[RMDB]
RNA sequence: GGGAACGACUCGAGUAGAGUCGAAAAAGUAUCUAAUUCGUUAGAUACUCGGGGACGGGUGAGGCGGCCGUGUGCGCACACAGUGCUCCAGCCGCGCGCGCGAAUUUCGCCUAUUCGUAGGCGAAAAACAAGGGUAGUCAUUCGUGACUACCCUUGUAAAAGAAACAACAACAACAAC
Reactivity to DMS in 0.01 (KOAc 150mM, MgCl2 10mM, bicine 150mM(pH8.5), 24C), signal-to-noise 2, nucleotides 027 to 126: a010g010u000a000u000c000u000a020a040u010u000c150g020u000u000a000g010a010u000a000c000u000c030g000g000g010g000a240c070g000g000g000u000g000a100g000g010c010g010g020c020c030g010u000g020u000g020c030g050c040a100c230a100c200a150g000u000g000c010u000c010c020a040g000c000c020g000c030g000c030g010c010g010c020g010a120a130u010u000u000c000g000c000c000u000a020u000u000c190g020u000a010g010g020c000g000a000a000a020a130